Chemical mapping of a 207-nucleotide RNA with 2A3. For 2A3 the reverse transcriptase was SuperScript II with manganese. The data come from the RNA Mapping Database (RMDB), library RNAMAK.
RNA sequence: GGGAACGACUCGAGUAGAGUCGAAAACCCAUAAAGUUCGCUUUAUGGGACGAAUCCUAAGUCAACACUUUGAUCACGGAUCAACAGCUAUCGGAAACGAUAGACAUGGCCGUGGGAGUGUUGAUAUGGAAGCAGCCUCACGUUUCGACGUGAGGAACGACGGCUUAUUGUUCGCAAUAAGCCGUCGAAAAGAAACAACAACAACAAC
Reactivity to 2A3 in 0.01 (KOAc 150mM, MgCl2 10mM, bicine 150mM(pH8.5), 24C), signal-to-noise 2, nucleotides 027 to 156: c000c000c000a020u040a000a010a010g000u050u220c230g020c170u000u000u010a000u050g000g000g030a040c070g120a080a090u000c030c000u020a200a050g040u000c000a000a000c000a010c010u070u160u230g230a240u240c000a000c000g040g000a110u130c070a110a150c040a070g000c000u000a000u000c000g100g040a110a010a040c000g000a000u020a030g080a020c070a160u050g010g000c040c000g000u000g000g020g000a020g000u020g000u000u000g010a000u000a070u030g010g020a050a050g150c050a010g050c000c000u000c000a000c000g010u040u150u200c300g100a060c000g000u000g000a000g000g000a000a010